[RMDB]
RNA sequence: GGGAACGACUCGAGUAGAGUCGAAAAAUAAACAGCCUUAGCGUAUGUUUUCAUCCCAACAAAUAAUACGCGACGUAACAAUGACUGUACGCGUAUUAAUCAGUCAAUAACGCUAAGGUAAAAAAAAGUUGGGAACAUGAUUCGUCAUGUUCCCAACAAAAGAAACAACAACAACAAC
Reactivity to 2A3 in 0.01 (KOAc 150mM, MgCl2 10mM, bicine 150mM(pH8.5), 24C), signal-to-noise 1, nucleotides 027 to 126: a000u220a010a140a000c100a000g030c020c000u000u000a000g000c000g040u080a040u220g050u060u050u140u210c080a070u020c020c020c000a000a060c040a000a090a020u060a000a000u010a000c010g020c020g000a020c110g240u050a100a020c020a060a120u060g040a020c000u020g010u110a060c010g000c020g020u010a010u000u020a030a020u030c000a000g010u000c000a000a130u090a170a000c000g010c010u000a000a000g010g030u020a090a000a040a000a000a000a000a000

Structure probing data (2A3) for a 177-nucleotide construct.